[RMDB]
RNA sequence: GGGAACGACUCGAGUAGAGUCGAAAAUCUUCUUCGCCGUAAGGACAAGGGUUCCUGGGGAAGGGUCGUCCGCCCAGGGAAAGUCGGGACCUAAGGUGAGGCCGAACGGCGCAGCCGAUGGACAGCAGGUCAAGAUUCCUGCACCGAUCAUGUGGAGCUUCACUAUCUCGUUCGCGAGAUAGUGAAGAAAAGAAACAACAACAACAAC
Reactivity to DMS in 0.01 (KOAc 150mM, MgCl2 10mM, bicine 150mM(pH8.5), 24C), signal-to-noise 1, nucleotides 027 to 156: u010c020u000u000c000u000u000c090g030c000c040g010u010a100a090g010g020a100c030a120a140g000g000g070u010u000c000c000u000g010g010g060g030a110a120g020g020g010u000c170g020u020c020c060g050c000c010c040a090g000g000g000a060a050a090g000u000c040g000g030g000a120c010c000u000a020a090g000g000u010g020a170g010g020c010c000g010a090a060c020g070g000c000g030c040a300g030c000c000g010a130u000g100g000a060c070a300g020c000a030g010g000u020c030a120a200g010a300u000u000c000c000u000g010c000a150c020c000g000a050u010c010a130u030g000u000g010g000a200g000
Reactivity to 2A3 in 0.01 (KOAc 150mM, MgCl2 10mM, bicine 150mM(pH8.5), 24C), signal-to-noise 2, nucleotides 027 to 156: u030c010u080u000c000u010u080c100g000c060c010g080u080a050a070g050g000a030c090a020a080g080g000g020u060u040c010c010u000g000g020g000g060a120a110g010g000g020u210c090g090u030c010c030g130c040c000c020a010g000g000g040a070a080a010g030u020c010g000g010g160a120c010c000u060a090a040g040g000u080g050a040g020g000c000c000g070a130a070c180g020g000c020g000c020a010g010c000c060g010a030u080g030g010a020c010a030g000c000a000g000g000u020c050a040a100g020a100u170u090c000c000u000g000c000a010c000c010g050a050u080c040a130u070g070u120g080g050a030g000